[RMDB]
RNA sequence: GGGAACGACUCGAGUAGAGUCGAAAAGACAGCGUUCGCGCUGUCAAAAAGCGUACUACGCAAGAGGCCAUGGGAGUCCUGGAUCCCAAAUAGGAUCUUGGACGAAGAACAUGGCUACCCACCUUGCGUAUCGCAAAAAGGUAGGUUCGCCUACCAACAUGUCUGAAGUGUUCGCACUUCAGACAUGAAAAGAAACAACAACAACAAC
Reactivity to DMS in 0.01 (KOAc 150mM, MgCl2 10mM, bicine 150mM(pH8.5), 24C), signal-to-noise 2, nucleotides 027 to 156: g010a010c000a000g010c010g070u000u010c210g110c020g040c000u000g000u000c000a070a030a080a170a110g030c000g010u000a110c080u020a000c010g000c010a010a020g010a150g010g030c010c010a020u010g000g020g010a300g020u000c000c000u000g040g010a020u000c010c010c020a020a070a230u000a040g020g000a020u000c000u010u000g000g010a030c000g000a080a100g010a090a150c010a020u000g000g030c000u010a000c020c000c000a300c150c000u000u000g030c010g000u000a000u000c000g000c020a060a060a050a140a040g000g010u000a040g020g030u020u000c120g020c010c000u010a020c000c000a010a220
Reactivity to 2A3 in 0.01 (KOAc 150mM, MgCl2 10mM, bicine 150mM(pH8.5), 24C), signal-to-noise 3, nucleotides 027 to 156: g010a000c020a000g000c000g080u090u080c120g070c010g020c100u000g030u000c010a020a040a000a060a000g020c040g010u070a080c040u010a000c030g000c010a000a000g020a020g000g000c000c000a000u010g020g010g030a090g010u010c010c000u000g000g000a000u020c000c010c030a110a170a010u240a050g000g000a000u000c000u010u010g000g010a000c010g000a040a020g020a000a000c000a010u000g010g000c000u010a010c010c000c000a040c000c010u000u020g010c000g010u000a010u300c040g000c050a070a070a000a000a000g000g000u010a020g020g000u030u040c240g130c080c000u010a000c010c000a000a010
Structure probing data (DMS and 2A3) for a 207-nucleotide construct.
Reactivities are rounded to 0.1 and cut off at 0 and 3.
The reactions ran in a buffer of 150 mM KOAc, 10 mM MgCl2 and 150 mM bicine (pH 8.5), at 24 C.